[RMDB]
RNA sequence: GGGAACGACUCGAGUAGAGUCGAAAAACUGCUGUGCUAGCAAUGAGCAAGGCUCUGUGGGUGUGGGACCUGCUGAGCCAGGCAUGGGAGAGAAUCUCCUGGUCUGCCAGUUGCUAAGACCAUGGGCGCUAUAUCUCCAGUUCGCUGGAGAUAUAGCAAAAGAAACAACAACAACAAC
Reactivity to DMS in 0.01 (KOAc 150mM, MgCl2 10mM, bicine 150mM(pH8.5), 24C), signal-to-noise 4, nucleotides 027 to 126: a130c030u010g020c020u010g000u000g000c030u000a030g000c030a050a020u010g010a300g010c050a140a090g000g010c000u000c000u000g010u000g010g000g010u000g020u000g020g010g010a160c020c000u000g020c000u000g000a020g020c020c000a070g010g000c000a070u010g000g000g000a040g010a240g010a150a140u000c010u000c000c010u000g020g010u000c040u010g010c030c050a220g020u000u000g000c010u010a060a040g010a140c110c020a040u000g000g010g010c130
Reactivity to 2A3 in 0.01 (KOAc 150mM, MgCl2 10mM, bicine 150mM(pH8.5), 24C), signal-to-noise 3, nucleotides 027 to 126: a000c020u060g010c020u050g030u060g040c010u000a000g000c000a020a040u140g020a040g050c050a070a140g010g000c000u000c010u020g020u020g010g030g000u060g050u230g120g150g150a050c000c000u010g000c000u000g000a000g000c000c000a010g000g010c020a090u160g000g000g000a010g000a010g060a100a220u070c000u010c000c000u020g000g040u030c030u050g010c030c020a050g040u050u050g000c010u060a120a050g020a030c070c000a040u060g030g020g040c050
Structure probing data (DMS and 2A3) for a 177-nucleotide construct. The RNA was probed in 150 mM KOAc, 10 mM MgCl2 and 150 mM bicine (pH 8.5) at 24 C. The DMS profile rests on 5,674 reads. Source: RMDB library OK2TST, as collected in RNAgym.